RNA sequence: GGGAACGACUCGAGUAGAGUCGAAAAGCUGUGCACCCGCCCGUGGGAGACUGCCACGUCCAGUACUUCUGCAUGGCGGCUGUGCUGCUUGCGGGUGCGGGCGUGGUUGCCUUCACUAAAAUGAUGCGACCAGCUAGUCGUUCGCGACUAGCUGGUCAAAAGAAACAACAACAACAAC
Reactivity to 2A3 in 0.01 (KOAc 150mM, MgCl2 10mM, bicine 150mM(pH8.5), 24C), signal-to-noise 1, nucleotides 027 to 126: g030c050u150g000u110g030c040a000c050c000c000g040c040c070c000g070u060g020g000g000a000g000a000c000u000g000c010c000a010c060g000u000c000c000a070g010u000a040c000u050u210c090u100g070c060a070u180g050g130c020g100g000c040u300g110u240g030c000u030g040c000u000u000g040c030g000g010g010u000g000c040g000g000g000c000g000u000g000g000u000u000g000c000c000u000u030c020a080c040u170a000a000a030a190u300g130a060u090g020c040
Notes
Structure probing data (2A3) for a 177-nucleotide construct. For 2A3, 557 sequencing reads were counted. 2A3 adducts were read by reverse transcription with SuperScript II with manganese. The RNA was probed in 150 mM KOAc, 10 mM MgCl2 and 150 mM bicine (pH 8.5) at 24 C. It was measured as part of the RMDB library OK1LIB. Values cover nucleotides 27 to 126.